This 207-nucleotide RNA was probed chemically with DMS and 2A3. 2A3 adducts were read by reverse transcription with SuperScript II with manganese. It was measured as part of the RMDB library ARCHII. The reactions ran in a buffer of 150 mM KOAc, 10 mM MgCl2 and 150 mM bicine (pH 8.5), at 24 C.

RNA sequence: GGGAACGACUCGAGUAGAGUCGAAAAUCAUCAGGGGAUGUCUGUAAACCCAAAAUGAUUGUCAUAUAGAACAGAAUCGCCGUGCAGUACGUUGUGGACGAAGCGGCUAAAACUUACACAACUCGCCCAAAGCACCCUGCCCGUCGGGUCGCUGAGGACCUUUUCUAACGUUCGCGUUAGAAAAGGUAAAAGAAACAACAACAACAAC
Reactivity to DMS in 0.01 (KOAc 150mM, MgCl2 10mM, bicine 150mM(pH8.5), 24C), signal-to-noise 2, nucleotides 027 to 156: u000c030a050u010c040a300g020g010g010g020a050u000g010u000c080u000g020u000a070a140a280c000c020c010a000a080a120a030u010g020a080u000u000g010u020c060a110u000a160u000a130g010a090a160c050a130g090a060a040u000c090g030c030c010g040u000g010c070a160g020u000a040c100g030u010u010g020u000g030g020a070c010g000a080a300g000c050g030g000c050u000a030a040a090a110c070u000u000a060c070a060c020a030a020c040u000c040g050c100c000c010a050a080a120g020c050a110c030c010c000u000g010c020c050c020g000u000c050g000g010g020u000c050g030c010u000g020a270g000g020
Reactivity to 2A3 in 0.01 (KOAc 150mM, MgCl2 10mM, bicine 150mM(pH8.5), 24C), signal-to-noise 2, nucleotides 027 to 156: u010c000a000u010c030a010g010g010g000g000a000u060g020u000c000u020g030u040a080a080a130c000c000c030a040a000a000a000u030g010a010u050u080g050u030c060a030u240a030u090a210g070a080a040c010a010g000a030a020u040c020g000c010c020g060u100g080c210a000g020u020a010c040g010u010u010g010u010g000g000a010c020g000a050a000g000c000g000g000c000u000a000a000a000a020c020u070u180a010c020a000c000a020a070c030u060c120g050c010c000c000a030a030a000g020c010a010c000c000c000u060g070c050c070c020g160u200c070g050g000g000u020c090g020c000u010g000a020g000g010